Structure probing data (2A3) for a 207-nucleotide construct. Conditions: 150 mM KOAc, 10 mM MgCl2 and 150 mM bicine (pH 8.5), 24 C. It was measured as part of the RMDB library M2RFPK. For 2A3, 515 sequencing reads were counted.

[RMDB]
RNA sequence: GGGAACGACUCGAGUAGAGUCGAAAAACGAAACCCAAGGUGCAUGCCGAGGUGCGGUAGGCCUCGUUAACAAACCGCAAAAAAAUAGUCGCAAACGACGAAAACUACGCACUCGCAGCUUAAUAAAAGUAGGGUCCCUACUUCGGUAGGGACCCAAGUGUGAUUACCAGUUCGCUGGUAAUCACACAAAAGAAACAACAACAACAAC
Reactivity to 2A3 in 0.01 (KOAc 150mM, MgCl2 10mM, bicine 150mM(pH8.5), 24C), signal-to-noise 1, nucleotides 027 to 156: a000c040g050a140a000a000c010c020c020a040a010g080g010u010g010c100a090u050g030c070c050g050a040g020g040u030g000c020g110g000u010a000g000g080c000c020u040c030g070u000u080a110a050c010a080a050a220c080c030g000c000a150a100a000a000a000a000a000u150a100g060u080c030g030c100a000a030a090c080g000a000c020g030a080a000a000a000c020u030a040c020g000c000a010c000u080c010g030c010a070g000c040u050u110a110a010u100a160a170a110a050g060u200a150g040g000g010u000c000c000c000u000a020c010u000u150c230g030g000u020a000g000g030g000a000c000c010c000a010a000